[RMDB]
The record gives the reactivity of an RNA of 177 nucleotides to 2A3 and DMS. For 2A3 the reverse transcriptase was SuperScript II with manganese. 2A3 is a SHAPE reagent: it acylates the 2'-hydroxyl of flexible nucleotides of all four kinds. The RNA was probed in 150 mM KOAc, 10 mM MgCl2 and 150 mM bicine (pH 8.5) at 24 C.
RNA sequence: GGGAACGACUCGAGUAGAGUCGAAAAUGGAUCUGAAUAAAAUUACAUGACCAUUCAACUCUCCAGAGGAACUUGAGAAUCAUUCUUUUCUUGAGCUGAAGUGGGAUAUUUUGGAAUUUUGAGAGUUAAUAGCACAAUAUUUCGAUAUUGUGCUAUUAAAAGAAACAACAACAACAAC
Reactivity to 2A3 in 0.01 (KOAc 150mM, MgCl2 10mM, bicine 150mM(pH8.5), 24C), signal-to-noise 9, nucleotides 027 to 126: u090g030g040a120u020c050u070g080a110a090u180a160a100a030a030u140u090a050c040a050u140g030a020c010c000a000u030u030c030a020a070c010u010c010u000c050c020a020g020a030g050g050a060a050c020u060u080g040a040g080a110a070u100c030a080u130u100c050u080u140u050u010c010u040u030g030a020g020c040u030g040a100a050g090u090g020g000g030a030u040a120u140u140u080u070g050g020a060a040u030u070u070u120g090a120g000a000g010u010u020
Reactivity to DMS in 0.01 (KOAc 150mM, MgCl2 10mM, bicine 150mM(pH8.5), 24C), signal-to-noise 6, nucleotides 027 to 126: u010g000g000a130u010c020u000g010a130a090u030a030a040a060a110u000u010a080c030a040u010g000a100c000c010a060u000u000c030a040a060c030u000c010u000c060c120a060g000a040g010g000a030a070c090u010u010g000a120g010a110a090u020c120a110u010u020c040u010u010u010u010c030u010u000g010a020g010c080u000g010a030a030g020u010g010g000g010a090u020a070u010u010u010u000g000g020a070a050u000u010u000u010g000a080g000a080g010u010u000